[RMDB]
RNA sequence: GGGAACGACUCGAGUAGAGUCGAAAAGAGAAGAAGAGCGCGAAUUGGAAACCAGGGAACCAUAUUACGCGCGCAAGGAACCGGGCCUUGGUUCCUUGGAAAGAUUAGAUAAUUCCCCUGGUAAGAACCAGCCCUAAUGAUUCGUCAUUAGGGCUGGAAAAGAAACAACAACAACAAC
Reactivity to 2A3 in 0.01 (KOAc 150mM, MgCl2 10mM, bicine 150mM(pH8.5), 24C), signal-to-noise 3, nucleotides 027 to 126: g070a000g030a170a020g110a110a000g080a020g010c020g000c000g000a020a030u000u020g000g000a010a020a040c000c000a000g000g010g000a020a030c010c000a020u060a010u300u090a100c000g010c000g000c010g000c000a000a000g000g020a000a000c010c000g050g180g060c040c040u080u110g030g000u000u000c000c000u000u000g000g050a060a050a000g030a010u150u300a060g110a130u140a090a050u130u110c030c000c000c000u000g000g020u010a000a030g040a010a030
Reactivity to DMS in 0.01 (KOAc 150mM, MgCl2 10mM, bicine 150mM(pH8.5), 24C), signal-to-noise 2, nucleotides 027 to 126: g000a200g040a110a120g000a110a090g010a070g010c010g060c000g020a010a020u000u000g000g000a230a120a050c010c000a000g020g000g000a060a220c000c000a020u040a060u020u000a080c070g020c000g000c000g010c020a000a050g010g000a040a000c010c000g000g000g030c060c080u010u010g000g010u000u010c000c020u000u020g000g000a090a040a050g010a110u060u020a080g020a080u050a030a070u030u000c070c000c000c010u010g040g050u040a090a220g010a110a100